[RMDB]
RNA sequence: GGGAACGACUCGAGUAGAGUCGAAAAGAUAUGGAUCCAUGACUCCUGACCUAGUGUGUUCGACGAAGAGCUUCGGAAACGAAGCUCAGAGAACACACUAGGUCUGGAGCAAUGUGGAUCCUAAGUCCAUUCUGAUCAACUUCGGUUGAUCAGAAUGAAAAGAAACAACAACAACAAC
Reactivity to DMS in 0.01 (KOAc 150mM, MgCl2 10mM, bicine 150mM(pH8.5), 24C), signal-to-noise 2, nucleotides 027 to 126: g010a060u010a300u000g000g000a010u010c010c000a010u000g000a200c000u010c000c000u000g000a020c000c000u020a010g010u010g000u000g010u000u020c000g000a290c300g020a140a120g000a030g000c010u000u000c000g000g000a120a110a230c010g010a010a000g020c000u000c000a000g010a080g020a010a000c000a010c000a000c010u000a000g000g010u000c000u000g010g000a000g030c100a020a010u010g020u000g010g000a020u000c000c000u000a020a090g000u000c040
Reactivity to 2A3 in 0.01 (KOAc 150mM, MgCl2 10mM, bicine 150mM(pH8.5), 24C), signal-to-noise 1, nucleotides 027 to 126: g050a040u130a070u280g010g000a000u010c010c000a010u050g270a190c010u000c000c010u000g000a020c000c030u010a000g000u020g020u040g000u000u020c180g260a300c000g000a300a110g010a030g020c000u000u000c000g050g120a100a110a040c000g010a010a000g000c040u020c000a000g000a000g010a020a000c010a010c000a000c000u000a000g000g000u010c000u000g000g020a000g000c000a000a080u250g000u030g040g020a020u000c000c010u000a090a020g050u000c020
Notes
An RNA of 177 nucleotides, treated with DMS and 2A3 and read out base by base. The 2A3 profile rests on 3,216 reads. Reactivities are given for positions 27 through 126. Source: RMDB library TTRINS, as collected in RNAgym. The RNA was probed in 150 mM KOAc, 10 mM MgCl2 and 150 mM bicine (pH 8.5) at 24 C. For 2A3 the reverse transcriptase was SuperScript II with manganese.